[RMDB]
RNA sequence: GGGAACGACUCGAGUAGAGUCGAAAAUUCCGCCGCGCCCCUUCUUCGACUCGGAACGGCUCAUCUCGACAAGAGGCGGCAGUCCUCAGUACUCUUACUCUUUUCUGUAAAGAGGAGACUGCUGGACCCGCCGCCCAAGUUCGAGCAUGGGCCAUCUGAUACUAUAAGGGUUCGCCCUUAUAGUAUCAAAAGAAACAACAACAACAAC
Reactivity to 2A3 in 0.01 (KOAc 150mM, MgCl2 10mM, bicine 150mM(pH8.5), 24C), signal-to-noise 4, nucleotides 027 to 156: u050u000c010c020g060c020c020g050c030g020c020c000c000c000u030u050c040u060u030c050g030a020c020u020c030g030g070a070a030c080g020g010c000u020c000a000u000c000u000c010g000a010c030a080a100g100a170g060g000c000g000g000c010a000g010u000c010c000u000c000a050g010u120a300c030u010c020u070u170a260c000u060c000u060u230u170u070c190u270g290u300a050a010a000g010a000g010g010a000g000a000c000u010g120c070u010g020g000a000c010c050c120g000c000c000g010c000c000c000a030a010g010u080u030c000g000a010g010c020a000u000g000g010g000c000c000a010u010c000u000
Chemical mapping of a 207-nucleotide RNA with 2A3. 2A3 is a SHAPE reagent: it acylates the 2'-hydroxyl of flexible nucleotides of all four kinds. The reactions ran in a buffer of 150 mM KOAc, 10 mM MgCl2 and 150 mM bicine (pH 8.5), at 24 C.